[RMDB]
RNA sequence: GGGAACGACUCGAGUAGAGUCGAAAACGCAGGGUUGUCAUUGAUGAGGCUCCUUCACUCCCACCUCAUCUGCUCCUGUUGCACAUGCAGCGGGCCUCAUCAGUUCACCUCCUCGGUGAUCCUAACCCUAAUCCGGAGUGUUCGCACUCCGGAUUAGAAAAGAAACAACAACAACAAC
Reactivity to DMS in 0.01 (KOAc 150mM, MgCl2 10mM, bicine 150mM(pH8.5), 24C), signal-to-noise 2, nucleotides 027 to 126: c080g020c180a050g020g000g000u000u000g010u000c130a100u020u000g030a000u000g000a020g000g010c020u000c010c080u000u000c120a080c170u010c020c020c020a130c130c080u000c040a030u010c050u000g010c030u010c050c060u010g010u000u000g000c010a070c130a040u020g000c110a040g000c180g010g000g000c030c010u000c000a010u010c020a040g030u000u000c040a020c020c000u010c090c080u000c080g020g000u000g000a030u000c020c050u010a040a060c060c040
Description:
The data come from the RNA Mapping Database (RMDB), library OK2TRN. The record gives the reactivity of an RNA of 177 nucleotides to DMS. For DMS the reverse transcriptase was MarathonRT. The DMS profile rests on 1,944 reads.